Notes: This 177-nucleotide RNA was probed chemically with DMS and 2A3. Conditions: 150 mM KOAc, 10 mM MgCl2 and 150 mM bicine (pH 8.5), 24 C. Source: RMDB library TTRINS, as collected in RNAgym. DMS adducts were read by reverse transcription with MarathonRT. The 2A3 profile rests on 4,389 reads.
RNA sequence: GGGAACGACUCGAGUAGAGUCGAAAAGAUAUGGAAGGAUGAAGAGUCCUUGGAUUUAAAUACAGUGUUGACGGAUCGGAAACGAUCCGAUGGCUGUAUUUUGUCAGGACUCCAUCCUUCCUAAGUCCAUUUGUUUCAACUUCGGUUGAAACAAAUGAAAAGAAACAACAACAACAAC
Reactivity to DMS in 0.01 (KOAc 150mM, MgCl2 10mM, bicine 150mM(pH8.5), 24C), signal-to-noise 2, nucleotides 027 to 126: g020a100u010a300u000g000g020a010a010g020g000a020u000g000a200a170g020a030g020u000c010c000u000u000g010g020a020u000u020u000a000a000a000u000a020c010a020g010u000g020u020u010g050a180c190g010g000a010u000c000g000g000a160a110a240c010g020a000u000c000c010g000a030u000g010g030c010u000g020u000a000u000u000u010u000g000u000c010a020g000g000a020c000u000c000c000a010u000c010c000u000u000c000c000u000a010a060g000u000c060
Reactivity to 2A3 in 0.01 (KOAc 150mM, MgCl2 10mM, bicine 150mM(pH8.5), 24C), signal-to-noise 3, nucleotides 027 to 126: g010a030u210a030u250g000g000a020a000g010g000a030u070g130a180a300g020a030g010u030c040c000u050u070g140g010a120u300u300u300a020a000a000u010a000c000a000g000u020g150u300u300g300a180c050g000g020a000u010c000g010g010a060a100a080c020g000a020u000c020c000g010a010u020g070g000c000u010g000u020a000u030u000u000u000g000u000c000a010g000g000a010c000u030c000c010a020u010c000c000u020u000c010c000u000a000a000g010u050c010